An RNA of 177 nucleotides, treated with DMS and 2A3 and read out base by base. For DMS the reverse transcriptase was MarathonRT.
RNA sequence: GGGAACGACUCGAGUAGAGUCGAAAAGAUAUGGAAUAUGCCGAAGUAUUCACACGUUGAAAUCGGAAACGAUGGAGUGUGAUACCGAAGUCAUAUUCCUAAGUCAAAAUCUAGCUUCGGCUAGAAAGAAAUUACGUAUGUUCGCAUACGUAAUUUCAAAAGAAACAACAACAACAAC
Reactivity to DMS in 0.01 (KOAc 150mM, MgCl2 10mM, bicine 150mM(pH8.5), 24C), signal-to-noise 4, nucleotides 027 to 126: g000a040u000a300u010g000g000a000a010u000a000u010g000c030c000g000a210a130g000u000a020u010u010c000a010c010a010c010g010u000u020g000a060a140a030u000c010g010g000a130a070a140c000g010a020u000g000g010a070g020u000g010u000g000a010u000a020c020c020g000a160a100g000u010c000a020u000a000u000u000c000c000u010a020a090g000u000c060a060a080a100a150u000c000u000a010g010c000u000u010c260g030g000c000u000a000g000a020a070a100
Reactivity to 2A3 in 0.01 (KOAc 150mM, MgCl2 10mM, bicine 150mM(pH8.5), 24C), signal-to-noise 4, nucleotides 027 to 126: g010a030u060a030u120g000g020a010a000u010a000u000g000c020c020g000a030a010g020u020a040u290u300c010a000c000a000c010g280u300u060g030a050a030a010u000c010g010g000a060a040a030c010g000a000u010g010g020a030g000u010g000u000g000a000u000a000c000c010g060a040a010g060u090c000a000u000a010u020u000c000c000u000a070a020g020u000c010a020a010a010a300u000c000u010a000g020c010u050u040c300g140g000c000u020a020g010a030a030a000
It was measured as part of the RMDB library TTRDEL.